An RNA of 177 nucleotides, treated with 2A3 and DMS and read out base by base. Values cover nucleotides 27 to 126. Conditions: 150 mM KOAc, 10 mM MgCl2 and 150 mM bicine (pH 8.5), 24 C. The 2A3 profile rests on 953 reads. Values are in units of 0.01, from 0 to 300, in steps of 10.
[RMDB]
RNA sequence: GGGAACGACUCGAGUAGAGUCGAAAAUCAAAGUACAUAAGCGCAGAAGCAGCAGAGAAAGUUAAAACGCUUAAACAAUAUCAUUUUCUCAUUUACGAUGUAAACAGUCAAACGAUAAAGAUACACAACCGUCAGGUAAUUUCGAUUACCUGACGGUAAAAGAAACAACAACAACAAC
Reactivity to 2A3 in 0.01 (KOAc 150mM, MgCl2 10mM, bicine 150mM(pH8.5), 24C), signal-to-noise 1, nucleotides 027 to 126: u040c040a050a010a000g060u040a060c010a080u060a110a010g000c010g000c030a030g000a120a000g020c050a010g030c070a010g050a010g060a080a110a000g010u080u130a000a290a000a000c020g000c020u020u070a120a030a040c060a080a120u020a080u140c010a020u040u030u020u080c000u000c020a060u050u180u000a060c080g020a000u070g040u080a000a090a090c030a030g030u080c020a000a250a060c010g000a010u060a110a080a030g060a010u130a060c040a030c000a060
Reactivity to DMS in 0.01 (KOAc 150mM, MgCl2 10mM, bicine 150mM(pH8.5), 24C), signal-to-noise 2, nucleotides 027 to 126: u000c040a070a130a150g030u000a020c070a090u010a030a110g000c060g010c030a050g040a250a090g000c080a030g010c060a080g010a090g000a110a050a060g000u000u010a020a200a100a030c120g000c040u000u000a040a080a170c090a050a100u000a020u010c090a030u000u000u000u000c030u000c000a090u000u000u050a120c060g000a110u000g040u000a030a050a030c190a060g020u010c040a040a020a080c100g000a010u010a030a080a110g000a120u030a020c110a000c240a080